Source: RMDB library OK3TST, as collected in RNAgym.
Structure probing data (2A3) for a 207-nucleotide construct.
2A3 adducts were read by reverse transcription with SuperScript II with manganese.
[RMDB]
RNA sequence: GGGAACGACUCGAGUAGAGUCGAAAACUCAAUCACUACGGUGAUUGAGAAUGCUUACGCCUCAAUCAAGCUUGAAUGGAGUGCCUCUAGCAGAUAUAGACUGAAACAUUUAGUAUGGUCAAGCAGGGAGCAACAGCUCGAGUACGCUCGAGCUGAACCCUAGCCUUUUAUUCGUAAAAGGCUAGGGAAAAGAAACAACAACAACAAC
Reactivity to 2A3 in 0.01 (KOAc 150mM, MgCl2 10mM, bicine 150mM(pH8.5), 24C), signal-to-noise 1, nucleotides 027 to 156: c000u000c000a000a010u000c010a000c000u050a010c220g140g000u000g000a000u000u000g000a000g000a040a050u070g000c000u020u020a040c080g000c030c000u060c090a070a110u060c080a110a030g080c050u080u090g050a030a000u110g050g010a010g060u110g010c020c020u000c030u030a010g010c040a000g030a050u100a020u060a070g050a000c000u040g050a020a200a080c080a000u100u150u010a050g030u050a050u080g020g050u030c020a020a000g030c040a030g130g000g000a040g040c020a020a070c000a000g020c010u000c010g000a000g020u050a040c270g040c040u000c000g010a000g000c010u000g000a000a000
About this RNA: The reactions ran in a buffer of 150 mM KOAc, 10 mM MgCl2 and 150 mM bicine (pH 8.5), at 24 C.